RNA sequence: GGGAACGACUCGAGUAGAGUCGAAAACGCCGAGUGGGCACUGUCAACUGAACCGCCACCUGCUGGUUAUGCGAUCGUGCGGCGAUAUAUUGUAAAGAGGCUCCUCAGCUCAACAGAAGUGUUCUUGUGCCGCAGGGGUGUUGUGUCUUCCACCUCAGGUAGAGUUAGUAUUCGUACUAACUCUACCAAAAGAAACAACAACAACAAC
Reactivity to DMS in 0.01 (KOAc 150mM, MgCl2 10mM, bicine 150mM(pH8.5), 24C), signal-to-noise 1, nucleotides 027 to 156: c070g000c030c000g000a110g020u010g020g030g000c020a090c020u010g010u000c050a070a150c040u030g000a100a090c030c030g040c020c050a030c030c010u020g020c020u000g020g010u020u010a110u000g040c120g000a080u000c050g060u010g020c000g050g070c010g000a110u000a090u000a110u050u000g010u000a090a060a110g020a170g020g000c010u000c010c000u020c030a120g020c050u000c070a080a140c040a060g000a070a100g020u000g010u010u000c030u020u030g020u000g010c050c040g040c010a030g010g030g020g010u000g000u020u000g010u000g000u010c030u000u000c010c030a090c110c040u010c070a150
Reactivity to 2A3 in 0.01 (KOAc 150mM, MgCl2 10mM, bicine 150mM(pH8.5), 24C), signal-to-noise 2, nucleotides 027 to 156: c050g080c010c010g000a060g020u120g000g030g000c030a000c080u090g030u070c050a070a000c080u120g040a110a040c030c020g000c070c040a100c030c050u090g000c020u070g040g140u180u110a150u170g040c060g040a070u050c080g040u080g050c020g010g030c010g000a000u020a020u010a040u100u230g100u150a060a080a070g090a070g000g020c010u020c030c030u070c040a000g010c020u050c070a020a100c030a100g090a170a030g080u060g050u150u070c030u080u080g060u060g080c020c000g000c030a000g000g000g000g000u070g000u060u060g000u020g010u000c000u050u000c040c000a080c000c050u120c050a000